This 207-nucleotide RNA was probed chemically with 2A3. It was measured as part of the RMDB library OK3TST. For 2A3, 314 sequencing reads were counted.
RNA sequence: GGGAACGACUCGAGUAGAGUCGAAAAUAUAAUUGUUUAUCAACGGAUGAUAUGGAAAAGGUGACGUUCUCACUUUUAGAUCGCAGUCAUCAUAGCACUCCUGGAGGAGGCUAUAGUAUAUCGCGAAGACGUCAUUUUGAUAUUUGACGGUUAAGGCCUCUCUGUACCUCUUCGGAGGUACAGAGAGAAAAGAAACAACAACAACAAC
Reactivity to 2A3 in 0.01 (KOAc 150mM, MgCl2 10mM, bicine 150mM(pH8.5), 24C), signal-to-noise 1, nucleotides 027 to 156: u230a020u070a000a160u060u180g020u000u130u110a300u260c020a020a020c000g040g020a000u000g000a000u000a050u090g170g110a190a150a000a000g000g000u000g000a000c000g070u240u040c060u000c020a040c090u050u080u110u190a140g090a110u010c000g000c000a010g060u020c000a000u000c000a000u040a000g030c110a140c300u010c000c000u110g300g050a190g120g000a000g000g070c020u000a000u010a070g020u000a070u000a000u250c110g050c000g000a090a280g020a050c000g020u000c000a000u000u000u020u100g110a040u020a000u140u040u020g070a020c000g080g070u190u160a060a020g100g000c010